[RMDB]
RNA sequence: GGGAACGACUCGAGUAGAGUCGAAAAAAGCUCCAUGGUCGAGAGGGAAACAGCCCAGAGCAUCGACUAAGGCCCCUAAGCGUACGCUAAGUGGGAAAGGAUGUGGAGUCGCACAGACAACCAGGAGCACAUGAGAAGGGUUCGCCCUUCUCAUGUGAAAAGAAACAACAACAACAAC
Reactivity to DMS in 0.01 (KOAc 150mM, MgCl2 10mM, bicine 150mM(pH8.5), 24C), signal-to-noise 3, nucleotides 027 to 126: a120a050g010c010u000c010c030a130u000g000g010u000c030g000a080g030a140g000g020g010a130a110a100c230a160g000c000c000c000a100g000a170g000c090a060u000c030g030a080c040u010a080a110g010g020c040c000c000c010u000a120a050g010c020g010u000a040c220g000c010u010a050a030g010u000g010g000g000a060a050a080g000g010a080u000g020u000g000g010a090g000u000c020g000c150a070c140a100g010a090c070a080a070c010c030a090g000g000a080g010
Reactivity to 2A3 in 0.01 (KOAc 150mM, MgCl2 10mM, bicine 150mM(pH8.5), 24C), signal-to-noise 2, nucleotides 027 to 126: a000a010g040c040u060c030c000a220u060g030g000u060c030g040a020g010a100g160g030g000a040a170a070c030a090g090c000c010c000a010g010a010g100c010a070u010c020g030a040c110u040a100a110g190g040c000c000c000c000u020a010a020g000c040g100u180a020c120g000c010u010a050a030g050u210g000g000g000a040a040a060g090g000a050u150g030u110g060g030a030g020u010c020g030c060a140c040a110g030a000c020a020a050c020c020a000g070g050a020g010
The record gives the reactivity of an RNA of 177 nucleotides to DMS and 2A3.
The RNA was probed in 150 mM KOAc, 10 mM MgCl2 and 150 mM bicine (pH 8.5) at 24 C.
For 2A3, 1,166 sequencing reads were counted.